The record gives the reactivity of an RNA of 207 nucleotides to 2A3. The RNA was probed in 150 mM KOAc, 10 mM MgCl2 and 150 mM bicine (pH 8.5) at 24 C. Values are in units of 0.01, from 0 to 300, in steps of 10. For 2A3 the reverse transcriptase was SuperScript II with manganese. The 2A3 profile rests on 529 reads.
[RMDB]
RNA sequence: GGGAACGACUCGAGUAGAGUCGAAAACUGCACCUGAGACUACCCUGGAUCCGGUGACUGUGGUCCCCACCAGUGCUUCACCUGGAUUUGGGGACUCCGGUCCUCAUCUGGGCCUCACCUGGGUCUGUUGACCAUGGUCCUCAACUGGGCAAAAUUGCCCAGUUUGGGGGUUCGCCCCCAAACUGGGAAAAGAAACAACAACAACAAC
Reactivity to 2A3 in 0.01 (KOAc 150mM, MgCl2 10mM, bicine 150mM(pH8.5), 24C), signal-to-noise 2, nucleotides 027 to 156: c080u050g000c000a010c020c020u030g030a040g020a090c090u130a050c140c010c000u030g000g070a020u010c030c010g000g010u040g020a010c010u080g040u090g050g030u050c000c080c000c000a010c010c000a050g000u140g170c140u300u280c010a060c050c000u020g090g080a270u150u170u140g000g020g000g010a000c000u010c000c050g000g020u000c000c000u060c010a270u120c070u060g000g000g010c000c000u080c000a050c010c050u200g010g000g030u010c030u030g110u040u210g050a020c020c020a100u160g040g020u030c050c000u010c030a050a270c120u120g000g010g010c020a070a070a000a070u140u270g030